[RMDB]
RNA sequence: GGGAACGACUCGAGUAGAGUCGAAAAAAAAAACACUAGAGCUGACAACUAGCUGCAGUGAGCAGCAGCACACAAGCUGAGCUAGGUGGGAGCUGCGCUGAGCAGCAGCACAGCGAUCAGCAAAAAAGAAUAAGGAUAGUUUCGACUAUCCUUAUUCAAAAGAAACAACAACAACAAC
Reactivity to 2A3 in 0.01 (KOAc 150mM, MgCl2 10mM, bicine 150mM(pH8.5), 24C), signal-to-noise 2, nucleotides 027 to 126: a000a000a000a000a000a000c140a030c050u160a110g020a020g070c010u010g010a020c010a040a030c060u030a020g010c000u040g000c000a030g040u040g110a020g000c010a010g000c010a010g050c010a010c000a000c000a040a050g010c060u180g100a020g060c010u050a080g030g110u010g010g050g040a140g000c010u000g010c010g000c020u020g040a040g080c010a010g000c000a000g010c040a020c030a030g030c020g050a110u020c010a010g000c000a030a040a020a040a000a070
Reactivity to DMS in 0.01 (KOAc 150mM, MgCl2 10mM, bicine 150mM(pH8.5), 24C), signal-to-noise 5, nucleotides 027 to 126: a010a040a080a060a040a080c060a050c080u000a090g010a160g000c010u000g010a050c070a070a070c030u000a050g000c010u000g020c010a070g030u000g000a080g020c020a070g030c040a010g020c020a070c050a040c060a080a080g010c010u000g000a100g010c010u000a040g010g010u000g000g010g000a130g020c000u000g010c010g010c040u000g010a110g010c080a050g020c020a020g010c030a050c090a010g000c040g000a150u000c010a000g010c030a000a040a050a050a050a090